[RMDB]
RNA sequence: GGGAACGACUCGAGUAGAGUCGAAAAGCGACGAUCCAUAGGAGUAUGACGUUUGACGGUCUCUCUUAAACUGAGUCGCAUAACUGCUAGUUUAAGAUUGUCAGACGUCUUAAACUAGCUAAGGAUAGUAAGACUUUGUAUUCGUACAAGGUCUUACAAAAGAAACAACAACAACAAC
Reactivity to DMS in 0.01 (KOAc 150mM, MgCl2 10mM, bicine 150mM(pH8.5), 24C), signal-to-noise 9, nucleotides 027 to 126: g010c010g000a020c010g000a090u020c040c050a220u000a040g000g000a010g000u020a030u050g010a020c000g000u010u040u030g010a140c190g020g010u000c000u000c010u000c010u000u000a020a060a070c170u000g010a300g010u000c010g000c010a090u040a060a090c150u010g010c000u000a000g010u000u000u000a000a000g000a010u010u010g010u010c220a120g000a140c240g000u000c000u010u000a000a000a010c000u000a000g010c000u010a010a030g000g000a090u020a090
Reactivity to 2A3 in 0.01 (KOAc 150mM, MgCl2 10mM, bicine 150mM(pH8.5), 24C), signal-to-noise 9, nucleotides 027 to 126: g010c010g010a020c000g020a050u040c020c020a030u030a020g010g010a000g010u120a100u260g030a010c020g040u030u070u160g130a040c060g070g020u010c010u000c000u000c000u020u030a050a050a020c050u050g030a000g020u000c000g000c010a000u060a040a050c040u020g000c000u000a000g000u000u000u000a000a000g000a020u040u080g070u160c080a030g020a090c030g000u000c000u000u000a000a000a000c000u000a000g000c000u000a010a000g010g020a040u070a110
The record gives the reactivity of an RNA of 177 nucleotides to DMS and 2A3.
High DMS reactivity at an A or C suggests that its Watson-Crick edge is free.
It was measured as part of the RMDB library OK1LIB.
2A3 adducts were read by reverse transcription with SuperScript II with manganese.
The 2A3 profile rests on 40,858 reads.